RNA sequence: GGGAACGACUCGAGUAGAGUCGAAAACUGCCGAGUCUGUGUGUGGUGGCGUGGUUACGCUUGAAGUCUUUCGUUGUCAGGCGUAGAACGGUGUACACCAGACCGAAAGAUCUGAACAGAUUCGAGAGCGUCUGCCGUGCUUCGGCGUGGUGGGCGCAAAAGAAACAACAACAACAAC
Reactivity to DMS in 0.01 (KOAc 150mM, MgCl2 10mM, bicine 150mM(pH8.5), 24C), signal-to-noise 9, nucleotides 027 to 126: c020u010g010c090c010g010a020g000u000c000u000g020u010g010u020g020u000g000g010u010g000g000c010g020u000g000g020u030u010a010c010g000c000u000u000g000a060a070g010u040c120u020u020u030c200g010u020u060g000u000c000a010g010g010c010g020u000a010g000a100a040c040g010g010u010g010u030a210c000a030c010c010a020g000a020c020c010g010a050a070a080g000a130u000c020u010g000a090a040c020a020g000a020u000u000c010g000a130g000a160
Reactivity to 2A3 in 0.01 (KOAc 150mM, MgCl2 10mM, bicine 150mM(pH8.5), 24C), signal-to-noise 9, nucleotides 027 to 126: c020u050g030c010c000g000a010g010u000c000u000g020u000g030u010g010u020g020g060u050g050g100c010g010u050g020g270u150u040a000c000g000c000u010u030g030a070a050g060u080c080u060u250u180c160g140u140u200g080u050c010a000g000g000c000g000u000a000g010a050a010c030g030g080u040g020u040a020c010a000c000c000a000g010a010c000c000g060a080a060a010g030a090u020c020u050g020a050a010c000a000g000a000u010u020c010g010a020g010a010